RNA sequence: GGGAACGACUCGAGUAGAGUCGAAAACCGUAGGGAUCCUACCCACCUCCGUGAUGGCGAAGAACAACGCUUCGAAAGAGGCGUUGGGAGCCAUACACGGAGAGGGAUCCCUAAACGGAAACCAUUCAAACGUGAGUUCGCUCACGUUUGAAUGGAAGAAUAGCUCCAGGUUCGCCUGGAGCUAUUCAAAAGAAACAACAACAACAAC
Reactivity to 2A3 in 0.01 (KOAc 150mM, MgCl2 10mM, bicine 150mM(pH8.5), 24C), signal-to-noise 1, nucleotides 027 to 156: c020c040g030u010a000g030g000g000a000u010c020c000u090a170c170c020c000a060c000c000u020c000c000g020u010g000a000u010g010g010c000g190a300a040g020a080a020c000a000a000c000g000c000u010u010c000g040a110a080a050g000a010g010g000c010g020u000u000g000g000g000a010g000c030c000a010u090a100c010a010c000g000g000a000g000a000g000g010g000a000u000c010c000c010u000a010a010a000c020g040g030a090a000a100c000c000a000u000u000c000a010a000a000c000g000u000g000a010g020u160u220c300g080c090u000c000a010c010g000u000u000u020g000a000a000u010g000g010a010a000